[RMDB]
RNA sequence: GGGAACGACUCGAGUAGAGUCGAAAACUGUGGUGAGGCCCUAUCUAGUAUAGCAAUCCACCAAGCAGGUGACUUCACACAAUUCAGGUUCUCAGAGAAAAUGCGCCCUGACUUGACAGGUAUGGUCACCAGCAUCAUGCUUCGGCAUGAUGCUGGUAAAAGAAACAACAACAACAAC
Reactivity to DMS in 0.01 (KOAc 150mM, MgCl2 10mM, bicine 150mM(pH8.5), 24C), signal-to-noise 2, nucleotides 027 to 126: c060u000g100u020g000g000u010g000a140g000g020c090c240c050u000a000u000c000u090a080g000u040a000u000a100g000c020a030a240u000c010c040a000c020c060a120a060g000c190a050g020g000u000g000a020c000u000u000c060a080c010a300c100a050a020u000u000c100a010g000g000u010u000c000u000c030a120g070a200g000a100a020a040a120u020g000c190g000c300c050c020u000g000a100c160u000u000g000a120c020a010g010g000u000a090u100g080g010u000c000
Reactivity to 2A3 in 0.01 (KOAc 150mM, MgCl2 10mM, bicine 150mM(pH8.5), 24C), signal-to-noise 2, nucleotides 027 to 126: c010u010g000u050g100g030u010g140a110g130g000c040c020c000u000a030u000c010u040a000g300u000a130u000a090g100c000a000a090u100c030c000a000c000c000a110a000g030c000a010g130g070u080g080a060c010u000u030c120a020c000a000c040a060a080u060u050c000a030g180g000u100u000c100u000c100a060g000a000g080a050a150a000a000u240g030c010g010c000c000c000u050g020a050c000u020u000g000a080c050a040g020g270u140a050u160g000g000u000c010